[RMDB]
RNA sequence: GGGAACGACUCGAGUAGAGUCGAAAAUCACCAGAUGCUGCAUCACCUGAUCACUGAUGGCUCAACGGUAUCCGGCGGUACAACUGAAUGCUUGUAGCUGCCUUUUGAGCGGGUUGGCUGCAAUCCGAAAAGAGGACACACUUCGGUGUGUCCUCAACUCAGCUUAGUACUUCGGUACUAAGCUGAGAAAAGAAACAACAACAACAAC
Reactivity to 2A3 in 0.01 (KOAc 150mM, MgCl2 10mM, bicine 150mM(pH8.5), 24C), signal-to-noise 2, nucleotides 027 to 156: u030c020a020c030c000a010g020a050u030g030c020u000g040c000a020u000c020a020c010c000u040g010a030u030c030a010c080u060g030a020u040g070g040c060u030c070a070a040c030g000g030u050a030u010c040c000g020g050c070g030g010u090a020c030a110a030c080u210g110a200a100u150g040c060u040u020g010u020a020g030c010u020g020c000c000u040u100u060u060g030a030g020c040g000g000g010u120u250g080g000c010u010g020c000a010a090u030c030c030g030a020a030a050a060g000a000g000g000a000c010a000c000a000c000u060u060c200g030g000u000g000u000g000u020c000c000u000c000a000a000